[RMDB]
RNA sequence: GGGAACGACUCGAGUAGAGUCGAAAAAGGCAUCAUACGUGAUGCGAGAACUACAGUUCCGCUCCUCUAGCACACAGAGGUCAAUUGGGUGCGACCCCCCCCUCUCCCGUGGGUCAACGGGAACCAAAAAAGACCCUUUAGUUCGCUAAAGGGUCAAGUAUAGCGUUACGUUCGCGUAACGCUAUACAAAAGAAACAACAACAACAAC
Reactivity to 2A3 in 0.01 (KOAc 150mM, MgCl2 10mM, bicine 150mM(pH8.5), 24C), signal-to-noise 2, nucleotides 027 to 156: a000g090g000c010a050u050c010a040u070a120c240g110u130g020a060u110g030c040g010a090g000a040a010c120u300a160c110a080g000u000u000c030c000g030c040u050c020c000u030c060u070a030g040c030a010c010a000c010a020g040a000g000g050u030c010a010a010u050u110g080g040g010u000g040c020g200a300c060c000c000c000c020c010c020c000u060c010u000c060c000c000g010u000g000g000g000u090c020a000a000c000g000g000g000a010a000c010c010a030a000a050a050a000a050g000a000c000c000c000u010u000u000a030g000u040u060c170g030c140u000a000a000a000g000g010g000u000c000a000a000
Structure probing data (2A3) for a 207-nucleotide construct. The data come from the RNA Mapping Database (RMDB), library M2RFPK. For 2A3, 1,196 sequencing reads were counted. Reactivities are rounded to 0.1 and cut off at 0 and 3.